[RMDB]
RNA sequence: GGGAACGACUCGAGUAGAGUCGAAAAGAAAGAAACAUCACCCUAUGGAAAAGAAAGGCAGCCACAGACGAAACCUGAGGAAACAGGAAGCCACAACGUGCGCCAUGUGGUUAUCAAAGGGAGAAAAGCAUAAUUAGCUCUUCGGAGCUAAUUAUGCAAAAGAAACAACAACAACAAC
Reactivity to 2A3 in 0.01 (KOAc 150mM, MgCl2 10mM, bicine 150mM(pH8.5), 24C), signal-to-noise 3, nucleotides 027 to 126: g050a030a070a000g110a000a120a020c060a060u050c020a060c000c000c020u000a130u070g080g030a030a030a050a060g140a100a110a010g110g000c050a020g000c030c000a050c000a000g070a000c060g110a040a030a020c000c010u000g000a030g110g170a060a010a020c030a000g000g040a000a000g000c010c000a030c000a110a100c080g020u050g040c040g000c060c000a000u050g000u040g000g020u050u070a100u130c080a060a030a030g000g060g000a030g120a060a030a070a030
Reactivity to DMS in 0.01 (KOAc 150mM, MgCl2 10mM, bicine 150mM(pH8.5), 24C), signal-to-noise 2, nucleotides 027 to 126: g030a140a030a090g030a170a130a130c050a110u040c060a060c010c020c010u100a070u000g010g000a060a010a040a130g010a060a100a090g000g000c070a080g000c070c010a040c060a020g000a050c190g000a090a010a050c050c040u000g010a150g020g000a080a160a110c050a070g000g000a090a030g000c100c010a060c090a040a100c190g060u020g000c080g000c000c040a070u000g000u000g000g000u000u000a060u000c010a030a050a060g000g000g000a110g010a050a040a040a090